[RMDB]
RNA sequence: GGGAACGACUCGAGUAGAGUCGAAAAGUGGUAUUCGUACCACCUAACGAUAUGGACGAAGAUGAGCACGGUCGACGAAGGUUAGUCGGAAACGACUAACCAGAGACCGUGAACUACUCAUACUUCGUCCUAAGUCACCGAGACCAUUCGUGGUCAAUAGUCCCUUCUAUUUCGAUAGAAGGGACUAAAAAGAAACAACAACAACAAC
Reactivity to DMS in 0.01 (KOAc 150mM, MgCl2 10mM, bicine 150mM(pH8.5), 24C), signal-to-noise 2, nucleotides 027 to 156: g040u010g020g020u000a000u000u020c300g020u000a020c000c010a010c000c000u010a050a090c120g030a030u000a030u010g000g000a060c000g020a010a020g010a090u000g010a030g000c000a050c040g030g000u000c000g030a220c170g000a140a200g000g010u000u000a000g030u000c000g000g000a030a030a100c000g020a010c000u000a000a000c000c000a000g000a100g000a000c000c020g010u000g000a020a040c010u000a300c030u010c000a010u000a080c000u000u000c020g000u010c000c000u000a010a050g010u010c000a120c040c080g000a100g010a030c020c000a100u000u000c160g010u010g000g040u020c010a060a180
Reactivity to 2A3 in 0.01 (KOAc 150mM, MgCl2 10mM, bicine 150mM(pH8.5), 24C), signal-to-noise 5, nucleotides 027 to 156: g000u000g040g000u010a040u040u230c300g080u080a000c010c000a010c000c010u120a160a040c110g010a000u000a000u030g000g000a000c000g000a000a000g010a020u000g000a000g000c000a000c030g000g000u020c010g040a300c010g010a020a000g000g010u010u000a010g000u000c010g000g000a000a000a000c000g000a000c000u000a000a000c000c000a000g000a000g000a000c010c010g000u000g000a000a000c000u130a020c000u000c000a010u110a210c000u010u000c000g000u000c000c000u000a000a000g000u000c010a000c030c130g120a070g010a050c020c020a050u090u140c240g130u100g000g000u020c010a010a030
An RNA of 207 nucleotides, treated with DMS and 2A3 and read out base by base. The DMS profile rests on 3,704 reads. For 2A3 the reverse transcriptase was SuperScript II with manganese. Conditions: 150 mM KOAc, 10 mM MgCl2 and 150 mM bicine (pH 8.5), 24 C. The 2A3 profile rests on 5,831 reads. Source: RMDB library RNAMAK, as collected in RNAgym. DMS adducts were read by reverse transcription with MarathonRT.